[RMDB]
RNA sequence: GGGAACGACUCGAGUAGAGUCGAAAACCACGAUUGGAAUCAAGAUGCUUUGGUCGUGGUCGGAACAGCGCCGUGCACAAGGGGAUCUGCAAAGCACGGCACGUAAGCACUCAGAUGCGAAAGUAGGUUGUUACUACCAGUUCGCUGGUAGUAACAAAAAAGAAACAACAACAACAAC
Reactivity to DMS in 0.01 (KOAc 150mM, MgCl2 10mM, bicine 150mM(pH8.5), 24C), signal-to-noise 7, nucleotides 027 to 126: c000c000a030c030g000a030u010u010g000g020a120a030u010c100a130a130g010a120u030g010c110u000u000u010g000g010u000c010g020u010g010g030u010c080g010g010a110a110c080a090g010c080g010c000c000g020u010g000c020a070c200a110a160g010g020g000g020a090u020c040u000g000c170a090a110a130g000c020a000c000g010g000c000a000c050g000u020a070a130g010c050a040c050u010c100a090g000a130u000g000c020g010a060a080a070g000u030a060g010g030
Reactivity to 2A3 in 0.01 (KOAc 150mM, MgCl2 10mM, bicine 150mM(pH8.5), 24C), signal-to-noise 7, nucleotides 027 to 126: c000c010a000c000g010a010u040u070g100g080a040a080u070c100a150a090g160a260u180g040c060u040u040u050g010g000u000c000g010u010g010g010u010c020g060g080a060a040c020a060g040c000g000c050c000g010u010g000c010a060c050a210a130g040g050g020g050a110u090c030u100g020c090a060a030a000g000c000a010c010g000g000c000a010c010g000u050a040a020g010c000a010c020u110c040a060g080a240u070g000c020g050a020a050a020g080u120a050g050g090

This 177-nucleotide RNA was probed chemically with DMS and 2A3.
The RNA was probed in 150 mM KOAc, 10 mM MgCl2 and 150 mM bicine (pH 8.5) at 24 C.
DMS adducts were read by reverse transcription with MarathonRT.
Reactivities are given for positions 27 through 126.